RNA sequence: GGGAACGACUCGAGUAGAGUCGAAAAACCCUUGGGGAUGCUUAGGCCUCUGGGUGUGACAUCUGUAGCUCCUUUAGGCAUCACUCCUCUUGGGACACAGAUCAAAUCACCUGGCAUGAUCUGGGACAGUACAAGGUCAUUUCGAUGACCUUGUACUAAAAGAAACAACAACAACAAC
Reactivity to DMS in 0.01 (KOAc 150mM, MgCl2 10mM, bicine 150mM(pH8.5), 24C), signal-to-noise 3, nucleotides 027 to 126: a100c010c000c000u010u020g000g000g000g010a050u000g010c160u000u000a070g020g000c030c020u010c020u020g000g000g000u000g020u010g010a140c190a120u000c110u010g000u000a230g000c010u000c000c000u000u000u000a020g020g000c110a090u020c190a030c170u000c010c000u000c030u000u000g000g020g010a180c060a050c000a000g000a000u000c030a040a130a130u010c080a100c040c010u010g010g020c180a130u000g010a030u000c000u010g000g000g010a140c220
Reactivity to 2A3 in 0.01 (KOAc 150mM, MgCl2 10mM, bicine 150mM(pH8.5), 24C), signal-to-noise 1, nucleotides 027 to 126: a010c020c000c000u020u060g060g000g010g000a010u090g070c030u100u220a060g020g090c020c010u020c000u010g000g000g000u000g000u010g010a060c020a130u140c120u140g030u050a060g050c020u030c010c020u000u070u020a030g000g000c000a110u150c030a020c040u000c000c000u020c020u020u010g020g010g010a000c010a000c000a040g020a000u000c020a020a110a090u200c050a090c050c050u040g070g000c030a040u070g010a000u000c010u020g020g000g080a070c090

The record gives the reactivity of an RNA of 177 nucleotides to DMS and 2A3. 2A3 adducts were read by reverse transcription with SuperScript II with manganese. Conditions: 150 mM KOAc, 10 mM MgCl2 and 150 mM bicine (pH 8.5), 24 C. For DMS the reverse transcriptase was MarathonRT. For 2A3, 1,808 sequencing reads were counted.